[RMDB]
RNA sequence: GGGAACGACUCGAGUAGAGUCGAAAACAGCAGGCGGGCGACUUGGUCGCGACGCUCGGCUGGCUCCACGUGAUGCCGCAGGAUUCGACCAACGGCCUUACCACCAACGUCGUGAACUCGCCGAUCAGCAUCAGCGGAGUUUCGACUCCGCUGAUGCAAAAGAAACAACAACAACAAC
Reactivity to 2A3 in 0.01 (KOAc 150mM, MgCl2 10mM, bicine 150mM(pH8.5), 24C), signal-to-noise 1, nucleotides 027 to 126: c020a030g140c010a010g070g020c040g040g000g020c030g030a050c020u200u200g120g020u000c000g000c020g030a070c020g020c000u010c010g070g000c030u090g070g000c000u000c000c030a130c060g120u130g020a020u110g010c010c000g070c080a060g000g050a170u090u140c060g060a120c010c020a060a010c050g000g010c000c000u040u070a070c100c030a040c030c030a090a040c070g040u040c030g010u020g070a050a040c000u000c020g020c000c020g010a010u050c140a020
Reactivity to DMS in 0.01 (KOAc 150mM, MgCl2 10mM, bicine 150mM(pH8.5), 24C), signal-to-noise 1, nucleotides 027 to 126: c000a100g000c100a300g000g000c000g010g000g010c010g010a030c050u000u000g070g000u000c010g030c140g000a140c020g000c050u000c040g000g010c010u000g010g010c030u000c030c060a150c300g030u010g010a080u030g010c050c030g000c050a100g000g000a200u010u010c100g010a080c080c000a100a210c080g010g000c050c080u000u030a120c060c070a080c050c000a020a090c140g010u000c020g010u010g000a010a140c080u000c020g000c000c010g000a120u000c190a050
Structure probing data (2A3 and DMS) for a 177-nucleotide construct. High 2A3 reactivity points to a flexible backbone, as in loops and unpaired stretches. 2A3 adducts were read by reverse transcription with SuperScript II with manganese. Source: RMDB library OK2TRN, as collected in RNAgym. The RNA was probed in 150 mM KOAc, 10 mM MgCl2 and 150 mM bicine (pH 8.5) at 24 C. For DMS the reverse transcriptase was MarathonRT.